[RMDB]
RNA sequence: GGGAACGACUCGAGUAGAGUCGAAAAUGGACUUUUUACAGUUCCUACUUAUCCGGUUUUAACGCUGUUUUAUUGACGCAAAGGUUUACGGAUAAACAACUAAUAAUUAAACCUUUUGUGUGCGAAAAUUGGACGUUUAGGUUCGCCUAAACGUCAAGCAUCAUAAUUAGUUCGCUAAUUAUGAUGCAAAAGAAACAACAACAACAAC
Reactivity to DMS in 0.01 (KOAc 150mM, MgCl2 10mM, bicine 150mM(pH8.5), 24C), signal-to-noise 2, nucleotides 027 to 156: u010g000g020a050c030u000u010u000u010u000a130c150a140g010u000u000c000c010u010a120c100u000u000a020u000c000c010g000g000u000u010u000u000a080a130c140g010c010u000g020u000u010u010u010a080u000u050g000a070c020g010c030a050a030a040g060g030u000u010u000a080c030g010g000a060u010a020a060a190c050a050a170c050u000a110a070u010a100a220u000u000a010a010a010c000c000u000u000u010u010g030u010g020u000g020c030g020a080a060a080a240u010u010g010g000a000c000g000u000u000u000a010g000g040u000u000c300g040c010c000u000a010a000a000c030g030u000c000a010a100
Reactivity to 2A3 in 0.01 (KOAc 150mM, MgCl2 10mM, bicine 150mM(pH8.5), 24C), signal-to-noise 5, nucleotides 027 to 156: u080g020g010a030c040u080u080u040u100u210a100c170a050g000u070u070c010c000u020a040c030u030u010a010u010c000c000g020g010u000u020u010u060a050a020c050g000c080u040g140u070u090u050u130a150u100u250g060a010c010g000c000a000a000a000g000g000u000u010u000a010c010g000g010a010u030a030a090a010c050a040a020c040u150a040a130u150a150a040u150u110a020a010a000c010c000u020u040u070u090g060u010g010u040g050c070g090a060a040a090a150u150u130g080g000a000c000g000u000u000u000a010g010g000u010u030c160g070c030c000u000a000a000a000c000g000u000c000a000a000